[RMDB]
RNA sequence: GGGAACGACUCGAGUAGAGUCGAAAAGUUCGCAUAUCGAGUGCAUGCGAAAGGAUGGUCGGUCGUGCAUGCGAAAGGAUGGGCGCGUACGGAAACCAUCCAUAGGAUGGGAAAGCAUGCAGACGUACGGAAACCAUCCGCGAUACAGACAGCAUGCUGACCAUGAACGAUUCGUCGUUCAUGGUCAAAAAGAAACAACAACAACAAC
Reactivity to 2A3 in 0.01 (KOAc 150mM, MgCl2 10mM, bicine 150mM(pH8.5), 24C), signal-to-noise 2, nucleotides 027 to 156: g030u110u100c020g050c060a050u070a020u160c120g100a020g100u050g070c030a010u000g000c000g060a120a000a010g050g020a080u020g020g030u110c100g000g040u010c020g060u050g000c020a020u000g000c000g100a130a000a030g030g000a010u020g000g010g000c190g000c020g090u030a000c030g060g000a030a000a000c000c030a000u000c000c000a020u160a060g010g020a020u040g050g000g000a030a080a110g000c020a040u080g000c000a000g000a000c010g060u130a030c010g000g040a100a060a000c000c000a000u000c000c000g010c000g000a060u110a050c030a050g100a000c010a000g020c000a000u000g030c000
Reactivity to DMS in 0.01 (KOAc 150mM, MgCl2 10mM, bicine 150mM(pH8.5), 24C), signal-to-noise 1, nucleotides 027 to 156: g040u010u000c010g010c040a080u000a060u070c050g020a160g020u010g020c110a040u000g040c000g020a060a080a190g000g000a000u000g090g000u000c070g090g000u000c040g000u000g040c030a030u000g040c020g000a060a090a160g030g000a010u000g030g000g040c020g000c030g010u000a180c030g030g000a180a130a060c020c010a000u000c010c010a080u000a030g050g040a070u000g000g020g030a080a120a230g030c010a110u020g000c010a060g030a070c000g030u020a110c070g000g020a100a110a040c000c000a040u000c000c030g000c110g060a240u000a160c100a170g020a110c030a180g000c000a000u000g040c010
An RNA of 207 nucleotides, treated with 2A3 and DMS and read out base by base. For 2A3 the reverse transcriptase was SuperScript II with manganese. The RNA was probed in 150 mM KOAc, 10 mM MgCl2 and 150 mM bicine (pH 8.5) at 24 C.